[RMDB]
RNA sequence: GGGAACGACUCGAGUAGAGUCGAAAACUUGCCCCGCGCACUGCUCUUUACAUGGCCCGACGUGAGGGCACUUCGCGGGCAGUGCUGCGGCCUCGUGUGGGAUCGCGUCAGGACUGAAGGAGAGCGAAGCUGGCAGUAACUUCGGUUACUGCCAGCUAAAAGAAACAACAACAACAAC
Reactivity to DMS in 0.01 (KOAc 150mM, MgCl2 10mM, bicine 150mM(pH8.5), 24C), signal-to-noise 2, nucleotides 027 to 126: c100u000u020g000c100c040c000c030g030c110g020c090a020c050u000g000c010u030c000u030u010u000a160c300a100u050g000g010c020c000c000g030a280c180g000u060g000a130g000g000g010c010a020c000u030u000c110g000c250g010g010g000c010a000g060u000g020c000u040g100c010g000g010c060c010u000c040g010u020g000u050g000g000g000a150u000c040g000c020g000u000c040a090g000g000a080c040u030g010a110a060g010g000a020g000a070g010c050g000a060
Reactivity to 2A3 in 0.01 (KOAc 150mM, MgCl2 10mM, bicine 150mM(pH8.5), 24C), signal-to-noise 4, nucleotides 027 to 126: c040u060u090g060c000c000c000c010g010c000g000c000a000c020u020g020c000u000c020u100u170u160a120c120a080u150g020g000c000c000c000g070a070c060g140u140g120a200g000g050g010c060a040c010u030u040c040g010c050g010g000g000c000a000g020u010g000c040u060g000c010g040g000c000c000u070c040g120u070g010u060g040g060g030a030u080c000g010c040g060u050c030a030g060g060a050c030u040g030a120a000g120g020a050g000a010g020c030g040a040